RNA sequence: GGGAACGACUCGAGUAGAGUCGAAAAACAGUGUGCAGAGGCAGAUGGGGAUGCCGGCAACCCAGACAGCCCGGCAUUUGAUGACUCGUUCGCUCUGGAGGCGCAGCUCGUUCUGGGCGGCCUCAUCGUCUCUGAAGAUAUUCGUAUCUUCAGAGACAAAAGAAACAACAACAACAAC
Reactivity to DMS in 0.01 (KOAc 150mM, MgCl2 10mM, bicine 150mM(pH8.5), 24C), signal-to-noise 5, nucleotides 027 to 126: a120c090a070g010u000g000u010g020c090a070g010a050g010g010c020a050g000a090u000g000g000g010g000a040u000g000c010c010g000g010c040a110a080c050c020c080a150g000a120c190a120g000c130c010c010g000g000c020a020u000u010u000g000a120u010g000a090c020u000c020g000u000u000c040g000c040u010c030u000g000g000a030g000g000c010g000c030a110g020c010u000c020g010u000u000c130u020g000g010g000c010g000g000c010c000u000c010a020u010c130
Reactivity to 2A3 in 0.01 (KOAc 150mM, MgCl2 10mM, bicine 150mM(pH8.5), 24C), signal-to-noise 4, nucleotides 027 to 126: a000c060a020g110u100g030u080g150c020a010g000a030g050g020c040a030g030a090u080g070g000g000g000a010u010g000c000c000g000g030c020a090a090c060c050c040a060g080a160c050a030g050c050c010c030g010g000c010a000u030u020u100g160a120u130g030a030c010u000c030g040u090u040c030g020c030u040c020u080g110g010a010g000g030c230g020c270a090g000c020u010c020g110u300u100c090u140g000g000g010c010g000g010c000c010u010c000a030u070c020
Structure probing data (DMS and 2A3) for a 177-nucleotide construct.
The RNA was probed in 150 mM KOAc, 10 mM MgCl2 and 150 mM bicine (pH 8.5) at 24 C.
The 2A3 profile rests on 4,966 reads.
The data come from the RNA Mapping Database (RMDB), library OK2TST.